[RMDB]
Conditions: 150 mM KOAc, 10 mM MgCl2 and 150 mM bicine (pH 8.5), 24 C. The record gives the reactivity of an RNA of 177 nucleotides to 2A3 and DMS.
RNA sequence: GGGAACGACUCGAGUAGAGUCGAAAAUUUAAGAGCGUAGAUGUCUCUGUCACGAUACGAGUAAGUGACUCUCGUGUACUACUGACGAAUGAGACAGAGACAUUUAUGCUCACUGUCAGUCAAGGAAUCUGGCGUGAUAGUUCGCUAUCACGCCAGAAAAAGAAACAACAACAACAAC
Reactivity to 2A3 in 0.01 (KOAc 150mM, MgCl2 10mM, bicine 150mM(pH8.5), 24C), signal-to-noise 2, nucleotides 027 to 126: u110u110u110a280a040g000a000g000c040g010u000a000g000a010u000g000u000c020u000c000u010g000u010c020a020c080g070a060u040a050c000g000a020g000u050a260a050g010u060g260a040c030u030c010u010c060g100u100g020u080a060c060u000a000c010u050g120a070c000g020a060a080u170g020a070g000a020c000a000g000a000g000a000c010a000u010u010u000a010u000g000c000u000c000a000c010u000g020u030c030a040g060u030c070a070a070g050g010a110a110
Reactivity to DMS in 0.01 (KOAc 150mM, MgCl2 10mM, bicine 150mM(pH8.5), 24C), signal-to-noise 1, nucleotides 027 to 126: u020u000u010a140a170g000a030g050c000g030u000a000g010a030u000g000u000c000u010c010u000g000u010c000a050c040g000a110u000a060c030g000a040g020u000a030a070g000u000g010a110c150u000c150u000c150g030u020g000u000a080c020u000a040c060u000g010a110c060g000a100a060u000g000a110g010a000c000a000g020a020g000a000c000a000u010u000u000a000u000g020c010u000c010a010c050u010g000u000c060a060g010u010c090a030a120g010g000a100a140

It was measured as part of the RMDB library M2PK90. 2A3 adducts were read by reverse transcription with SuperScript II with manganese.